[RMDB]
Source information:
Chemical mapping of a 177-nucleotide RNA with DMS and 2A3. It was measured as part of the RMDB library OK1LIB. 2A3 adducts were read by reverse transcription with SuperScript II with manganese. Values cover nucleotides 27 to 126. Conditions: 150 mM KOAc, 10 mM MgCl2 and 150 mM bicine (pH 8.5), 24 C.

RNA sequence: GGGAACGACUCGAGUAGAGUCGAAAAAGCGCUAGAUAUGUACAUGGGUAUUCCCCCUUAUCUGUGUACUAUAUCUGAGAGGACUUGCUUGAUAGGGGGAGGAGUGCAAGUUUGUUUGGUGCGCGAAGUGUAUAUUAAUUUUCGAAUUAAUAUACACAAAAGAAACAACAACAACAAC
Reactivity to DMS in 0.01 (KOAc 150mM, MgCl2 10mM, bicine 150mM(pH8.5), 24C), signal-to-noise 7, nucleotides 027 to 126: a190g000c000g020c000u010a020g000a010u000a000u000g000u000a000c000a000u000g000g010g020u010a030u030u010c000c000c000c000c000u000u000a020u010c000u030g020u000g000u000a000c000u050a020u000a000u000c000u000g000a140g010a060g000g000a010c000u000u000g000c000u010u010g000a230u030a030g010g000g000g010g010a030g010g000a130g020u020g010c010a010a000g000u000u000u000g000u000u010u010g010g020u010g010c000g010c010g010a070a100
Reactivity to 2A3 in 0.01 (KOAc 150mM, MgCl2 10mM, bicine 150mM(pH8.5), 24C), signal-to-noise 9, nucleotides 027 to 126: a000g030c020g000c020u020a010g000a010u000a000u020g010u000a000c000a010u020g040g000g020u060a020u060u090c010c000c000c010c000u020u020a030u080c000u010g000u000g000u000a000c040u060a010u000a000u010c040u040g040a050g010a010g080g030a010c010u020u030g010c000u030u040g040a040u100a040g000g010g050g000g010a010g030g090a100g030u090g010c000a000a010g000u010u010u010g060u040u100u070g070g020u040g010c020g000c010g030a110a030